This 177-nucleotide RNA was probed chemically with DMS and 2A3.
RNA sequence: GGGAACGACUCGAGUAGAGUCGAAAAAGUACAUACACAUUGCCAAGUGCAUGAAGCCCAAAUUGGGCGAGCAGGCCUGCGAGGCGAUUGCCAAUGAGUAUUCGCGCCUGCGCUCCCAGGAGGCGGAGCACCCUUUGGUUUUCGAACCAAAGGGUGCAAAAGAAACAACAACAACAAC
Reactivity to DMS in 0.01 (KOAc 150mM, MgCl2 10mM, bicine 150mM(pH8.5), 24C), signal-to-noise 2, nucleotides 027 to 126: a090g020u000a100c050a040u000a040c030a000c010a060u000u000g010c070c050a140a080g000u000g010c000a020u000g020a190a160g000c010c000c000a060a070a180u010u000g000g020g010c090g000a050g010c000a030g020g000c040c120u000g050c030g000a050g010g000c010g000a070u010u000g010c120c160a140a080u000g000a170g080u000a050u000u000c010g010c010g000c000c000u000g000c020g000c060u000c020c020c000a100g000g040a090g010g020c020g020g000a090
Reactivity to 2A3 in 0.01 (KOAc 150mM, MgCl2 10mM, bicine 150mM(pH8.5), 24C), signal-to-noise 2, nucleotides 027 to 126: a000g070u080a010c000a060u080a020c020a000c010a080u040u110g060c030c000a200a050g100u070g100c000a030u020g020a090a040g000c030c000c000a050a210a040u110u060g000g000g000c000g020a010g000c020a010g010g000c030c080u150g050c010g040a040g120g000c050g100a290u170u250g040c000c020a070a140u240g050a060g090u100a210u120u070c020g010c000g000c020c000u000g000c010g000c020u000c000c020c020a010g110g060a060g020g030c030g030g020a020
For 2A3 the reverse transcriptase was SuperScript II with manganese. It was measured as part of the RMDB library OK2TRN.